RNA sequence: GGGAACGACUCGAGUAGAGUCGAAAACAAGCGCGGCAGGUGCUCCGGAUUUUUUUAGCUGGGUCGCAAGCUGUAUGCGCACAUGCGAUGCGCGUCUCCUGUGCGGACAGACUCUGGCAACCUGGCCUCUACGCAUGCGGUUCGCUGCGUGUGUAGAAAAAGAAACAACAACAACAAC
Reactivity to 2A3 in 0.01 (KOAc 150mM, MgCl2 10mM, bicine 150mM(pH8.5), 24C), signal-to-noise 9, nucleotides 027 to 126: c050a030a050g070c040g000c020g100g010c020a030g000g050u030g030c030u020c020c010g020g020a050u040u020u010u000u000u020u140a030g000c000u020g030g020g080u020c010g000c010a010a010g000c010u010g050u080a060u080g140c010g070c000a000c000a020u160g080c070g100a100u050g040c060g010c030g060u010c010u010c010c010u050g020u020g060c000g010g020a010c000a010g030a060c010u030c030u090g070g000c010a020a040c000c000u020g070g010c000c000
Reactivity to DMS in 0.01 (KOAc 150mM, MgCl2 10mM, bicine 150mM(pH8.5), 24C), signal-to-noise 9, nucleotides 027 to 126: c070a120a050g010c100g010c080g010g000c030a030g000g020u010g010c140u010c030c020g010g000a010u000u000u010u020u030u030u030a110g010c000u000g000g000g000u000c020g000c020a080a030g000c090u000g000u020a030u020g010c000g000c000a010c020a120u020g000c190g000a080u000g010c040g010c030g000u000c010u000c080c010u000g000u010g000c000g000g000a020c010a010g000a060c050u000c030u020g010g000c300a070a030c010c000u000g000g000c010c080

Chemical mapping of a 177-nucleotide RNA with 2A3 and DMS. The reactions ran in a buffer of 150 mM KOAc, 10 mM MgCl2 and 150 mM bicine (pH 8.5), at 24 C. Reactivities are given for positions 27 through 126. Source: RMDB library OK1LIB, as collected in RNAgym.